Conditions: 150 mM KOAc, 10 mM MgCl2 and 150 mM bicine (pH 8.5), 24 C. An RNA of 177 nucleotides, treated with 2A3 and DMS and read out base by base. The data come from the RNA Mapping Database (RMDB), library OK2TRN.
RNA sequence: GGGAACGACUCGAGUAGAGUCGAAAAAGCAGAUGGCGGAUGCCCUGCAGUACCUGCAGAAGGUCUCUGGAGACAUCUUCAGCAGGUGUUCUCCAGUGCCAAGUACCCUGCUCCAGGGCGCCUGCAGUGGUAUACCUAAGUUCGCUUAGGUAUACCAAAAAGAAACAACAACAACAAC
Reactivity to 2A3 in 0.01 (KOAc 150mM, MgCl2 10mM, bicine 150mM(pH8.5), 24C), signal-to-noise 3, nucleotides 027 to 126: a010g100c090a080g070a220u210g080g050c040g080g030a050u120g020c000c000c000u010g000c000a000g030u050a070c050c060u010g000c010a030g020a300a060g040g030u060c070u000c000u110g010g010a000g000a000c020a010u040c010u170u120c080a150g090c080a000g030g010u010g010u190u010c000u000c000c000a000g000u010g000c020c000a070a010g020u030a040c000c010c010u010g000c020u010c060c020a000g000g000g000c020g010c010c020u050g010c020a060g070
Reactivity to DMS in 0.01 (KOAc 150mM, MgCl2 10mM, bicine 150mM(pH8.5), 24C), signal-to-noise 7, nucleotides 027 to 126: a100g000c060a040g000a110u010g000g010c020g020g020a060u010g010c000c010c000u000g000c140a100g010u000a050c190c100u000g010c020a060g010a160a130g000g010u000c080u000c010u000g000g010a030g000a030c020a000u000c000u000u000c290a120g020c300a060g010g020u000g000u010u010c000u000c010c010a020g000u000g000c020c030a090a210g010u010a080c050c030c010u000g000c060u000c130c030a030g010g010g010c020g010c060c010u000g000c030a100g010